[RMDB]
RNA sequence: GGGAACGACUCGAGUAGAGUCGAAAACCUCAUGGGCUCAUCUGUCGCCCUGGGGUGGGGCUGCCCAUUUACAGGUAAAGACACAACUGGGAAGCGGCAAGGCUGGGAUUCUGGGUCUCUGUGUGAAAAAACAACUUACUUUCGAGUAAGUUGUUUUAAAAGAAACAACAACAACAAC
Reactivity to DMS in 0.01 (KOAc 150mM, MgCl2 10mM, bicine 150mM(pH8.5), 24C), signal-to-noise 6, nucleotides 027 to 126: c000c000u000c030a040u020g010g010g010c020u010c080a110u010c150u020g010u010c220g010c020c010c010u000g020g000g010g020u000g010g000g010g010c160u000g010c010c010c030a110u000u000u010a090c110a060g010g010u010a050a100a130g010a070c070a050c060a070a090c080u000g010g000g010a100a120g010c090g010g010c070a060a070g000g000c070u010g010g000g000a130u000u000c080u010g000g000g000u000c060u010c070u010g020u000g010u010g010a010a060
Reactivity to 2A3 in 0.01 (KOAc 150mM, MgCl2 10mM, bicine 150mM(pH8.5), 24C), signal-to-noise 3, nucleotides 027 to 126: c000c000u010c020a110u210g020g000g000c020u030c060a220u080c200u230g180u190c050g010c040c000c000u010g000g000g030g000u020g010g020g020g030c070u090g040c000c000c000a020u140u110u100a070c040a020g080g000u110a140a160a060g080a010c030a010c010a080a160c050u050g000g000g060a070a040g040c030g050g000c040a050a060g060g020c050u050g000g030g030a070u180u050c030u110g060g010g010u010c030u000c040u060g030u040g010u080g080a140a110